[RMDB]
RNA sequence: GGGAACGACUCGAGUAGAGUCGAAAAUUGCCGGCUUCAAAGGCUUUAUCGUUGAUUACGUGUGCUAUAACAACGCCAUAGGUAUCAUUCUUCGUCUUCUUAGGCGCGGAACAUCUAAAUAUGGCUACACCCCUUGGACAUUCGUGUCCAAGGGGUGAAAAGAAACAACAACAACAAC
Reactivity to DMS in 0.01 (KOAc 150mM, MgCl2 10mM, bicine 150mM(pH8.5), 24C), signal-to-noise 1, nucleotides 027 to 126: u000u000g000c020c000g020g020c090u000u000c200a110a100a220g010g040c000u020u000u000a050u050c020g000u000u000g010a050u000u000a020c040g000u010g020u000g000c050u020a060u030a060a120c180a050a130c150g040c010c000a020u000a020g010g000u020a100u020c100a210u000u000c020u010u000c010g000u000c000u020u040c210u000u010a020g000g030c020g020c070g000g000a030a010c220a060u020c100u050a000a110a110u010a030u000g000g030c040u030a290

Background
This 177-nucleotide RNA was probed chemically with DMS. DMS adducts were read by reverse transcription with MarathonRT. The reactions ran in a buffer of 150 mM KOAc, 10 mM MgCl2 and 150 mM bicine (pH 8.5), at 24 C.